[RMDB]
RNA sequence: GGGAACGACUCGAGUAGAGUCGAAAACAACAGCACGCUGAUGGGCUGGGCAAGGGGGUAGCAAUACCUCCCGGCUGCAAGGGAAUUUACAUCAGCUGGCUGCGUGCUGGGCUUCUUAGUACGUGGCAAGAUCCAAGGAAGCUGGCAUCCCGGGUAGGAAUUAUUCAUACUUCGGUAUGAAUAAUUCAAAAGAAACAACAACAACAAC
Reactivity to DMS in 0.01 (KOAc 150mM, MgCl2 10mM, bicine 150mM(pH8.5), 24C), signal-to-noise 2, nucleotides 027 to 156: c030a020a080c010a020g020c010a020c060g020c030u010g030a020u000g040g010g050c010u000g000g000g080c040a070a010g020g010g030g040g040u000a020g020c290a170a200u000a010c010c000u000c000c010c000g010g110c030u000g010c070a100a110g010g010g010a150a080u000u020u010a100c040a030u010c000a040g010c020u000g030g050c000u000g010c020g020u000g000c000u000g010g000g030c100u010u000c010u010u000a090g030u000a030c050g010u000g000g000c030a120a110g000a100u010c040c020a170a120g000g000a070a050g050c030u010g020g000c050a170u000c000c010c010g030g010g020u000a140g010
Reactivity to 2A3 in 0.01 (KOAc 150mM, MgCl2 10mM, bicine 150mM(pH8.5), 24C), signal-to-noise 3, nucleotides 027 to 156: c040a010a000c000a000g010c010a000c040g010c000u020g010a040u060g020g060g030c030u040g010g060g000c040a060a080g010g000g010g000g010u000a010g000c040a090a030u000a040c000c000u060c000c000c010g030g000c030u170g020c050a070a090g080g050g060a110a110u140u210u130a100c010a030u030c000a000g000c000u010g040g000c010u020g000c010g010u010g000c000u040g020g040g000c010u050u020c010u020u090a070g040u080a080c080g060u070g040g000c050a080a080g020a110u050c060c010a020a000g010g000a010a020g000c020u030g040g020c020a040u030c010c020c050g070g030g010u160a100g000